[RMDB]
RNA sequence: GGGAACGACUCGAGUAGAGUCGAAAAUUGGCCUUAAAUGGGAUCCUGUGAGAGGGGGUCCCUCCAUUGGCAGCUGGACUGUUCUUUGGGGCCUUAUGUGGUGUUUGCCUCUGAGGUACUCAGGGGCAGCCACGAGCAUUUUCGAAUGCUCGUGGCUAAAAGAAACAACAACAACAAC
Reactivity to 2A3 in 0.01 (KOAc 150mM, MgCl2 10mM, bicine 150mM(pH8.5), 24C), signal-to-noise 3, nucleotides 027 to 126: u080u110g010g000c000c000u020u050a000a020a020u010g010g010g010a010u000c000c010u050g030u080g100a180g020a060g070g030g020g010g040u000c010c020c000u000c000c000a000u000u000g000g000c020a000g030c050u300g100g120a300c030u090g030u300u230c010u090u000u000g010g000g000g010c000c000u000u020a150u120g020u020g000g030u000g010u120u070u070g000c000c000u000c000u000g000a000g250g170u270a210c050u000c010a000g010g000g000g000c000
The record gives the reactivity of an RNA of 177 nucleotides to 2A3. The 2A3 profile rests on 981 reads.